[RMDB]
RNA sequence: GGGAACGACUCGAGUAGAGUCGAAAAGUGGAACAAACGGGUGUGGAAACGCCGGUGUGGACCUUCCUCGGACCGCGCCCGGCGGGCUGGUGGGUUCGGCGGCGGCUACACGAGGUCGCAGUGCACCCAGGAAUGCACUGUUCGCAGUGCAUUCCUGAAAAGAAACAACAACAACAAC
Reactivity to DMS in 0.01 (KOAc 150mM, MgCl2 10mM, bicine 150mM(pH8.5), 24C), signal-to-noise 3, nucleotides 027 to 126: g010u010g000g000a080a110c240a040a130a060c180g000g000g000u000g040u040g020g000a100a120a160c080g010c000c020g000g000u040g000u020g000g000a050c010c000u010u040c140c080u040c160g010g000a120c000c030g000c000g000c110c020c020g000g000c020g000g000g000c030u060g000g010u000g020g000g000u000u010c050g020g000c130g010g000c300g020g070c020u000a080c100a060c210g010a140g010g010u030c040g000c050a120g000u000g010c010a060c040c010
Reactivity to 2A3 in 0.01 (KOAc 150mM, MgCl2 10mM, bicine 150mM(pH8.5), 24C), signal-to-noise 2, nucleotides 027 to 126: g080u050g010g060a070a040c040a030a150a030c060g030g070g000u050g000u040g060g110a190a140a000c030g000c000c000g060g020u080g000u010g010g030a050c030c000u090u080c000c020u070c020g050g070a090c000c010g000c010g020c060c060c000g000g030c010g030g010g000c140u020g060g030u090g030g000g000u070u050c030g020g000c040g000g000c000g000g000c010u080a090c080a010c050g070a120g000g020u090c000g040c070a000g000u020g060c020a010c040c030